RNA sequence: GGGAACGACUCGAGUAGAGUCGAAAAGAUAUGGACCACCGCCCAUAUGGAGACGUUCGGAAACGAAUACGUCUAUGAAGUAUGUAACAAGUGGUCCUAAGUCAAAAGGUAGUCUUCGGACUACCAACUUUAUGUUACCCUUCGGGGUAACAUAAAGAAAAGAAACAACAACAACAAC
Reactivity to DMS in 0.01 (KOAc 150mM, MgCl2 10mM, bicine 150mM(pH8.5), 24C), signal-to-noise 4, nucleotides 027 to 126: g000a050u000a300u000g000g020a010c000c020a020c010c050g010c300c190c000a010u000a010u000g000g000a020g020a000c000g020u010u000c000g000g000a150a060a200c000g010a030a070u000a050c030g020u000c000u000a140u010g010a090a120g000u000a000u000g010u030a060a080c200a190a070g010u000g010g000u000c000c000u000a010a090g000u000c020a070a030a100a080g000g010u000a000g000u010c000u000u000c230g000g000a010c000u000a000c000c000a010a030
Reactivity to 2A3 in 0.01 (KOAc 150mM, MgCl2 10mM, bicine 150mM(pH8.5), 24C), signal-to-noise 4, nucleotides 027 to 126: g010a030u070a050u110g000g000a000c000c000a000c000c020g030c000c020c000a000u020a020u040g020g000a000g000a000c020g000u000u000c000g040g030a100a060a060c010g020a020a050u300a250c010g000u000c010u020a300u050g010a020a000g020u020a010u050g080u150a150a100c110a240a040g000u000g020g000u000c010c000u020a090a030g050u020c040a000a000a060a170g000g010u020a000g000u000c010u030u130c300g060g010a010c010u010a000c000c000a000a000
This 177-nucleotide RNA was probed chemically with DMS and 2A3. Reactivities are given for positions 27 through 126. It was measured as part of the RMDB library TTRDEL. DMS adducts were read by reverse transcription with MarathonRT. High DMS reactivity at an A or C suggests that its Watson-Crick edge is free.